[RMDB]
Structure probing data (DMS and 2A3) for a 177-nucleotide construct. Conditions: 150 mM KOAc, 10 mM MgCl2 and 150 mM bicine (pH 8.5), 24 C. For DMS the reverse transcriptase was MarathonRT. Values cover nucleotides 27 to 126.
RNA sequence: GGGAACGACUCGAGUAGAGUCGAAAAGGCGUGCCUAAUACAUGCAAGUCGAGCGAAUGGAUUAAGAGCUUGCUCUUAUGAAGUUAGCGGCGGACGGGUGAGUAACACGUGGGUAACCUGCCCAUAACCAAGAUGGUAAGUUCGCUUACCAUCUUGGAAAAGAAACAACAACAACAAC
Reactivity to DMS in 0.01 (KOAc 150mM, MgCl2 10mM, bicine 150mM(pH8.5), 24C), signal-to-noise 4, nucleotides 027 to 126: g010g000c020g020u020g030c000c010u000a080a130u010a100c020a050u010g010c030a090a070g000u000c010g010a300g000c020g020a040a020u000g010g000a070u000u000a000a010g000a020g000c030u040u020g020c000u000c010u000u010a020u010g020a300a080g010u000u010a100g010c030g010g020c020g000g000a010c030g000g000g010u020g020a080g020u000a010a110c190a110c220g010u000g000g010g010u010a290a180c050c030u010g000c000c000c010a070u010a050a190
Reactivity to 2A3 in 0.01 (KOAc 150mM, MgCl2 10mM, bicine 150mM(pH8.5), 24C), signal-to-noise 8, nucleotides 027 to 126: g050g000c050g050u090g020c020c010u080a080a040u100a070c060a020u150g120c050a070a040g040u030c020g030a010g040c010g040a030a000u030g010g020a000u020u010a010a010g000a010g010c050u080u120g030c000u030c000u000u000a010u030g000a020a000g010u010u020a020g030c030g300g220c020g030g020a020c010g020g020g020u070g030a110g030u070a090a030c050a010c160g060u090g010g000g000u020a040a040c000c020u030g020c000c000c000a030u040a030a040
The data come from the RNA Mapping Database (RMDB), libraries RFM100 and RFMREP.